[RMDB]
RNA sequence: GGGAACGACUCGAGUAGAGUCGAAAAGAAGCAGUCCUUAUUGUGUGUGAUGUUUAGUCAUCGCACUGUCCCUACGGGCUGCCAACGUAGGGCCAAUGUGCCGAGAGGCACUAGAAGUACGGCUUAUUAUGACGCAUCGCCGUACCAACGAUGCUGAGACUAGCUCGUGAUUCGUCACGAGCUAGUCAAAAGAAACAACAACAACAAC
Reactivity to 2A3 in 0.01 (KOAc 150mM, MgCl2 10mM, bicine 150mM(pH8.5), 24C), signal-to-noise 1, nucleotides 027 to 156: g170a030a020g010c000a000g050u030c000c020u090u040a270u220u250g070u000g000u010g000u000g020a070u030g010u040u190u150a300g040u180c000a000u020c000g020c000a040c060u020g130u140c020c000c000u030a010c030g140g010g000c130u040g020c010c040a040a000c010g010u020a000g000g000g000c000c000a100a090u080g010u010g010c020c000g000a030g020a000g020g010c000a000c000u000a010g090a100a020g000u020a000c000g000g020c010u050u000a090u110u040a130u140g070a040c070g000c090a020u070c010g000c000c060g060u000a030c020c000a020a050c000g000a010u040g000c000u000g030a060

Structure probing data (2A3) for a 207-nucleotide construct.
Values are in units of 0.01, from 0 to 300, in steps of 10.
Reactivities are given for positions 27 through 156.